About this RNA:
An RNA of 177 nucleotides, treated with 2A3 and DMS and read out base by base. For DMS the reverse transcriptase was MarathonRT. For DMS, 1,214 sequencing reads were counted. Source: RMDB library OK2TRN, as collected in RNAgym.
[RMDB]
RNA sequence: GGGAACGACUCGAGUAGAGUCGAAAAGCACAUGACGAGGUAUUGAUGAGCAUUCGAAGCAACCUACAGGCAACAUAUGUUGACAGUGCAGACUUUGAAGGGAAAAGAUCUGGACUUGCCCAGAGACAGCAAAUACUGGUUUCGACCAGUAUUUGCUAAAAGAAACAACAACAACAAC
Reactivity to 2A3 in 0.01 (KOAc 150mM, MgCl2 10mM, bicine 150mM(pH8.5), 24C), signal-to-noise 1, nucleotides 027 to 126: g010c020a010c000a140u170g040a060c160g070a090g040g010u070a090u170u110g040a050u120g000a030g000c040a040u030u190c040g070a150a010g030c020a000a010c020c000u060a080c010a040g090g060c000a000a000c050a090u240a020u300g110u050u050g020a060c030a060g000u060g000c020a000g120a040c030u090u050u130g070a130a100g090g040g030a000a050a030a100g030a080u000c000u000g030g010a060c000u040u070g000c000c000c000a020g010a000g010a020c040
Reactivity to DMS in 0.01 (KOAc 150mM, MgCl2 10mM, bicine 150mM(pH8.5), 24C), signal-to-noise 2, nucleotides 027 to 126: g020c050a080c090a060u000g030a110c050g000a100g000g020u000a060u010u000g000a050u020g000a080g020c090a110u000u010c060g000a080a050g000c070a070a050c080c010u010a070c130a130g000g000c040a040a060c060a060u010a070u000g010u000u000g010a100c100a040g010u010g020c030a060g020a100c030u000u000u000g000a120a090g010g010g020a070a040a060a060g000a100u000c000u010g000g000a060c090u010u000g010c030c000c020a070g000a080g010a120c190

The 2A3 profile rests on 706 reads.